[RMDB]
RNA sequence: GGGAACGACUCGAGUAGAGUCGAAAACUGGGGUUUAGUGGUGCCCAGGGCUGGGACACAGUAGGCAGGUCUCCCCUUAUAGGGCCCACUCUGGAAAGGGAGCUUGGGACCUCUGGGCUCCACCUGAAAGAUUACUUCAAUUCGUUGAAGUAAUCUUAAAAGAAACAACAACAACAAC
Reactivity to DMS in 0.01 (KOAc 150mM, MgCl2 10mM, bicine 150mM(pH8.5), 24C), signal-to-noise 8, nucleotides 027 to 126: c120u000g020g000g010g010u010u000u000a060g020u000g000g010u000g000c000c000c000a020g010g010g010c100u000g000g000g010a040c020a080c070a140g020u010a090g020g020c170a140g000g000u000c010u000c010c020c010c020u000u010a130u010a090g010g000g010c020c010c030a040c040u000c030u000g010g010a110a130a150g000g000g010a030g000c120u000u000g010g020g000a090c130c030u000c030u000g000g000g010c000u000c000c000a010c030c080u000g000a120
Reactivity to 2A3 in 0.01 (KOAc 150mM, MgCl2 10mM, bicine 150mM(pH8.5), 24C), signal-to-noise 6, nucleotides 027 to 126: c020u020g000g010g020g000u040u110u210a020g000u030g030g010u100g070c000c010c000a010g030g020g000c050u110g000g020g040a010c050a010c020a240g250u270a130g130g050c100a030g090g000u000c000u020c000c000c010c000u090u290a300u220a140g000g000g000c000c000c010a030c010u000c010u020g060g110a170a070a060g070g000g010a020g000c070u090u040g040g000g030a040c010c010u000c010u010g000g000g030c010u000c000c000a020c000c000u030g050a060